[RMDB]
RNA sequence: GGGAACGACUCGAGUAGAGUCGAAAAGAAUUGGUAUGUAAGCUACAACUUCCGGUAGCUGCGUCACACUUUAAGAGUGUGCAUACUGAGCCGAAGCUCAGCUUCGGUCCCCCAAGGGAAGGGCAAACGUACGCUAUAGUUUCGACUAUAGCGUACGAAAAGAAACAACAACAACAAC
Reactivity to DMS in 0.01 (KOAc 150mM, MgCl2 10mM, bicine 150mM(pH8.5), 24C), signal-to-noise 5, nucleotides 027 to 126: g020a100a070u010u010g000g030u000a000u000g000u000a300a190g000c000u000a010c000a020a040c030u000u000c000c000g000g000u000a000g010c010u000g020c010g010u000c000a000c000a000c010u010u000u070a140a070g000a010g030u000g000u000g010c000a000u000a000c000u000g010a030g000c020c000g000a000a000g020c000u040c240a170g000c000u000u010c000g010g010u000c030c030c000c170c140a150a120g010g010g020a030a030g000g000g010c170a040a110a180
Reactivity to 2A3 in 0.01 (KOAc 150mM, MgCl2 10mM, bicine 150mM(pH8.5), 24C), signal-to-noise 9, nucleotides 027 to 126: g110a030a110u030u010g010g000u000a000u000g000u000a010a000g010c000u000a000c000a140a070c020u000u010c000c000g010g000u000a000g000c000u000g000c010g000u000c000a000c000a010c010u070u110u300a300a130g230a010g250u000g000u000g000c000a000u000a000c000u000g000a000g000c000c000g010a000a000g010c040u090c300a040g000c000u020u000c000g000g000u000c010c000c000c000c010a040a070g100g000g010a000a010g020g020g030c090a090a040a040